[RMDB]
RNA sequence: GGGAACGACUCGAGUAGAGUCGAAAAGGUAUCCACUUCGGUGGAUACCAAAGGCGAUCCCAGCUUCAGGGAACAACAACAAUAGAUGCAUCCCUAACGCCAAAAUUCCGGAUUUCGAUCCGGAAAACGACAUUAAAACUUUCGAGUUUUAAUGUCGAAAAGAAACAACAACAACAAC
Reactivity to DMS in 0.01 (KOAc 150mM, MgCl2 10mM, bicine 150mM(pH8.5), 24C), signal-to-noise 3, nucleotides 027 to 126: g010g010u000a010u000c000c000a000c000u000u020c180g020g000u010g000g000a010u000a000c000c000a020a050a080g000g020c030g010a150u010c010c010c000a170g000c150u000u000c150a030g000g010g000a060a100c050a050a050c110a080a140c160a160a120u010a100g010a120u000g020c110a070u000c000c000c010u000a090a100c070g020c030c030a070a070a110a170u010u010c000c010g020g010a020u000u000u010c160g010a030u000c000c000g000g000a000a000a040a120
Reactivity to 2A3 in 0.01 (KOAc 150mM, MgCl2 10mM, bicine 150mM(pH8.5), 24C), signal-to-noise 3, nucleotides 027 to 126: g010g010u000a000u000c000c010a000c000u040u060c180g100g010u010g000g000a000u000a000c000c000a020a020a000g000g000c010g010a080u050c000c010c010a010g050c070u200u140c090a010g020g000g040a030a030c010a030a000c010a030a010c030a090a200u110a220g120a090u130g030c030a070u030c020c010c010u010a070a030c020g020c010c010a060a080a020a040u070u010c000c000g000g020a020u040u080u100c120g060a010u080c000c000g010g000a010a000a000a010